[RMDB]
The data come from the RNA Mapping Database (RMDB), libraries RFM100 and RFMREP. This 177-nucleotide RNA was probed chemically with DMS and 2A3. The RNA was probed in 150 mM KOAc, 10 mM MgCl2 and 150 mM bicine (pH 8.5) at 24 C.
RNA sequence: GGGAACGACUCGAGUAGAGUCGAAAACUGCACGAUGCCUCCCAGGCUUCGCUGAUUACAAACCCCUGAGGUAGAAAGUCCCAAAGCUCGUGCUAAAGCAUCUGCCGUUUAGUGUUGCAGUUUAGCCUCAGUGAAUACGUUUCGACGUAUUCACUGAAAAAGAAACAACAACAACAAC
Reactivity to DMS in 0.01 (KOAc 150mM, MgCl2 10mM, bicine 150mM(pH8.5), 24C), signal-to-noise 6, nucleotides 027 to 126: c120u010g010c010a020c030g000a040u020g010c030c010u000c030c030c040a240g000g000c010u010u000c060g000c070u000g000a130u030u040a100c160a060a120a160c050c010c010c050u010g010a120g020g010u000a040g000a050a070a090g000u000c000c040c010a060a160a140g000c040u000c050g010u010g010c030u010a050a120a110g000c020a040u010c040u000g010c010c020g010u010u010u030a090g020u000g000u020u000g000c060a050g000u000u000u000a090g010c090c060
Reactivity to 2A3 in 0.01 (KOAc 150mM, MgCl2 10mM, bicine 150mM(pH8.5), 24C), signal-to-noise 8, nucleotides 027 to 126: c020u030g000c010a000c020g040a030u200g010c010c000u030c010c020c010a020g000g000c000u000u010c030g010c040u030g050a090u080u190a140c100a120a160a160c010c010c000c030u070g050a070g020g030u080a100g090a080a050a010g050u050c030c000c000a060a030a010g020c020u030c030g040u060g010c020u050a130a080a010g020c010a050u040c010u060g020c010c010g080u050u100u120a210g040u140g080u200u080g000c030a020g000u010u040u070a030g000c000c010